RNA sequence: GGGAACGACUCGAGUAGAGUCGAAAAAGAUGCUGAGCCUUGGGGACAGUGGUUUCCAGCCACGUGGCCUUAUGCCGGCUUUGGGAUGCAGUCAGGAUUGUGACCCCGGCCCACCCUUGCCGUGUGCGACUUAGUGACUAUUCGUAGUCACUAAGUCAAAAGAAACAACAACAACAAC
Reactivity to 2A3 in 0.01 (KOAc 150mM, MgCl2 10mM, bicine 150mM(pH8.5), 24C), signal-to-noise 5, nucleotides 027 to 126: a000g080a030u120g010c030u040g020a040g040c000c050u070u090g030g000g000g010a010c020a050g020u020g030g020u030u100u040c060c020a020g020c010c000a030c040g150u050g040g010c010c000u090u090a080u160g030c010c000g000g000c000u030u050u030g030g010g020a050u080g020c020a020g060u050c030a030g050g100a140u120u140g080u100g180a110c000c010c010c000g020g000c020c000c000a030c010c010c000u020u030g000c000c010g120u150g030u070g110c040
Reactivity to DMS in 0.01 (KOAc 150mM, MgCl2 10mM, bicine 150mM(pH8.5), 24C), signal-to-noise 9, nucleotides 027 to 126: a090g010a090u000g010c040u010g010a110g010c040c060u000u000g010g010g000g010a050c060a080g010u000g000g000u000u000u010c140c150a240g000c010c010a020c030g010u000g010g010c010c040u000u000a070u000g010c040c020g000g000c030u000u000u010g010g010g010a090u000g010c140a060g010u000c040a080g010g010a110u010u010g010u000g000a130c070c030c020c030g000g000c010c090c030a090c030c020c010u000u010g000c020c020g010u010g010u010g010c210

The record gives the reactivity of an RNA of 177 nucleotides to 2A3 and DMS. For 2A3, 12,776 sequencing reads were counted. Conditions: 150 mM KOAc, 10 mM MgCl2 and 150 mM bicine (pH 8.5), 24 C. It was measured as part of the RMDB library OK2TRN. The DMS profile rests on 21,788 reads. 2A3 adducts were read by reverse transcription with SuperScript II with manganese.